Structure probing data (2A3) for a 207-nucleotide construct.
The RNA was probed in 150 mM KOAc, 10 mM MgCl2 and 150 mM bicine (pH 8.5) at 24 C.
RNA sequence: GGGAACGACUCGAGUAGAGUCGAAAACUGCCAGGCGCCACGGCCGAUGACCAUUUGCACGUGAAAGUGCUCAUCGUGCGCGCACAGAGGAGCAAAGAGCCUCCAGAGCGCGCGAUGAAAGUCACGAGACAUAUCGGUAUAUGAGAAACAGCAGGACGCAUGCCGUAGUAUUCGUACUACGGCAUGCAAAAGAAACAACAACAACAAC
Reactivity to 2A3 in 0.01 (KOAc 150mM, MgCl2 10mM, bicine 150mM(pH8.5), 24C), signal-to-noise 1, nucleotides 027 to 156: c000u010g050c000c000a140g220g000c020g000c020c040a100c040g070g070c000c010g060a020u050g020a070c000c140a070u060u090u080g080c080a050c040g040u080g150a180a060a030g060u100g060c000u020c000a000u000c000g000u000g000c000g000c040g000c000a040c030a000g050a000g020g020a040g090c130a180a120a070g060a010g020c010c000u000c000c050a040g000a000g040c000g000c000g000c000g020a000u000g000a000a000a000g030u080c030a020c090g050a050g010a060c020a060u090a010u100c020g000g000u000a080u010a010u170g150a200g020a100a000a000c000a000g000c000a000g090g000a000c060